RNA sequence: GGGAACGACUCGAGUAGAGUCGAAAACAAAACUCGGCACCACAGAGGUUAAAGUGAGUGCUUUGAAAACAGCCGGCGUUGUGACAGGUAAUGUUGUAAAACAGUGUUGCACUGCUGCUGUUGAUUUAGAACACCGGCUUCGGCCGGUGUAAAAGAAACAACAACAACAAC
Reactivity to DMS in 0.01 (KOAc 150mM, MgCl2 10mM, bicine 150mM(pH8.5), 24C), signal-to-noise 1, nucleotides 027 to 129: c090a010a030a030a040c180u080c090g030g030c010a000c050c000a030c000a090g020a160g080g040u040u050a030a060a070g020u050g020a130g030u030g020c000u020u050u080g000a010a130a040a010c030a000g000c000c000g050g000c020g030u040u000g020u030g000a030c030a000g020g030u030a020a010u000g030u010u040g020u070a000a110a050a040c030a040g070u020g030u010u030g020c040a020c040u030g040c010u050g020c020u000g010u000u000g010a070u080u010u050a070g050a160
Reactivity to 2A3 in 0.01 (KOAc 150mM, MgCl2 10mM, bicine 150mM(pH8.5), 24C), signal-to-noise 3, nucleotides 027 to 129: c010a000a040a000a010c030u040c050g000g000c010a000c000c000a010c000a000g160a050g090g140u260u190a100a050a020g000u040g060a090g030u050g020c000u070u010u130g070a030a010a000a010c000a010g070c120c020g000g020c080g010u000u000g000u000g040a030c020a020g050g110u170a150a150u130g040u100u010g120u100a140a190a000a030c000a040g030u000g020u020u020g020c030a010c060u060g010c000u000g000c000u000g010u020u010g060a050u000u020u040a040g000a020
This 170-nucleotide RNA was probed chemically with DMS and 2A3. The data come from the RNA Mapping Database (RMDB), library 15KLIB. DMS (dimethyl sulfate) methylates the pairing face of unpaired adenines and cytosines. The RNA was probed in 150 mM KOAc, 10 mM MgCl2 and 150 mM bicine (pH 8.5) at 24 C. For DMS the reverse transcriptase was MarathonRT.